Chemical mapping of a 207-nucleotide RNA with 2A3 and DMS. For DMS the reverse transcriptase was MarathonRT. Conditions: 150 mM KOAc, 10 mM MgCl2 and 150 mM bicine (pH 8.5), 24 C. The data come from the RNA Mapping Database (RMDB), library M2RFPK. Values cover nucleotides 27 to 156.

RNA sequence: GGGAACGACUCGAGUAGAGUCGAAAAGGCUGUGUUGUGGCGGGGGCGAAACAGGAUCGUCAAGGGUGUAAAGAUCGCUCUUUUACUCGGCAUGAUACCACCGUUAUCGGGUCAACAGAGUAGUUGCUAGGGGAACGGGUGUUCGCACCCGUUCCAAGCCAACGAUAUUAUUCGUAAUAUCGUUGGCAAAAGAAACAACAACAACAAC
Reactivity to 2A3 in 0.01 (KOAc 150mM, MgCl2 10mM, bicine 150mM(pH8.5), 24C), signal-to-noise 4, nucleotides 027 to 156: g030g000c030u030g010u010g000u090u020g010u050g040g080c040g010g030g010g000g020c020g030a030a030a010c060a010g060g050a080u060c040g070u030c060a030a060g020g060g000u030g040u070a120a120a010g080a080u130c040g000c050u050c000u040u050u020u040a070c010u010c010g040g000c050a030u080g020a010u040a060c010c030a020c010c020g060u050u060a040u090c040g000g000g020u010c000a010a030c020a010g040a020g020u090a020g000u020u020g040c030u100a100g040g140g000g000a000a000c000g000g010g000u010g020u030u020c100g010c060a010c010c000c000g000u010u000c000c000a000a000
Reactivity to DMS in 0.01 (KOAc 150mM, MgCl2 10mM, bicine 150mM(pH8.5), 24C), signal-to-noise 1, nucleotides 027 to 156: g000g010c010u020g030u010g000u000u000g020u000g030g000c000g000g030g020g000g000c030g000a090a060a190c090a100g010g010a100u000c030g030u000c040a120a160g010g010g000u000g020u000a040a060a070g000a120u000c040g020c030u000c040u000u020u000u010a070c010u000c060g010g080c070a080u000g000a110u000a030c000c040a150c030c020g060u030u000a080u000c070g010g020g000u010c030a050a110c060a130g000a060g010u000a090g010u000u010g000c030u000a210g040g010g000g010a000a020c000g020g010g060u010g020u000u000c270g020c000a050c020c010c000g020u000u000c000c010a010a250